[RMDB]
RNA sequence: GGGAACGACUCGAGUAGAGUCGAAAAGAUAUGGAUGCGUGAUAACGACAGGUGGGACGAUGAAACAGUUUCGGAAACGAAACUGUGGAGUCCCAUAUUGGUCGACACGCAUCCUAAGUCAAAUGUAAUUCACUUUACUUCGGUAAAGUGAAUUACAGCUCGUAUAAAUCUUCGGAUUUAUACGAGCAAAAGAAACAACAACAACAAC
Reactivity to 2A3 in 0.01 (KOAc 150mM, MgCl2 10mM, bicine 150mM(pH8.5), 24C), signal-to-noise 4, nucleotides 027 to 156: g020a010u030a020u080g000g000a000u000g000c000g020u020g050a150u120a300a090c020g020a010c020a020g080g080u000g010g020g010a010c020g210a300u040g010a010a010a000c000a000g000u000u000u010c000g010g010a040a010a020c000g000a000a010a010c000u010g000u000g000g000a010g000u000c000c010c010a010u010a010u010u070g070g000u020c000g000a030c000a000c000g000c000a000u000c000c000u000a010a000g000u000c020a060a040a100u090g000u010a000a000u000u000c000a000c000u000u000u000a000c010u020u080c290g080g000u000a000a000a000g000u000g000a000a000u000u000a000c000a000
Reactivity to DMS in 0.01 (KOAc 150mM, MgCl2 10mM, bicine 150mM(pH8.5), 24C), signal-to-noise 1, nucleotides 027 to 156: g020a150u010a210u000g010g030a020u000g030c000g030u030g000a130u000a040a240c000g000a060c020a010g020g050u000g000g010g000a000c010g000a130u000g000a300a190a020c000a020g010u000u020u000c010g020g010a220a130a240c000g050a020a000a000c020u000g000u000g000g000a160g040u000c010c000c000a000u000a000u000u000g020g000u000c020g000a260c020a000c010g040c000a000u010c000c000u020a000a030g000u000c020a090a080a140u030g000u000a000a010u000u020c000a000c000u000u000u000a000c010u000u010c300g080g000u000a020a010a060g000u010g000a010a010u010u010a010c000a060
Record summary:
An RNA of 207 nucleotides, treated with 2A3 and DMS and read out base by base. The RNA was probed in 150 mM KOAc, 10 mM MgCl2 and 150 mM bicine (pH 8.5) at 24 C. For 2A3 the reverse transcriptase was SuperScript II with manganese.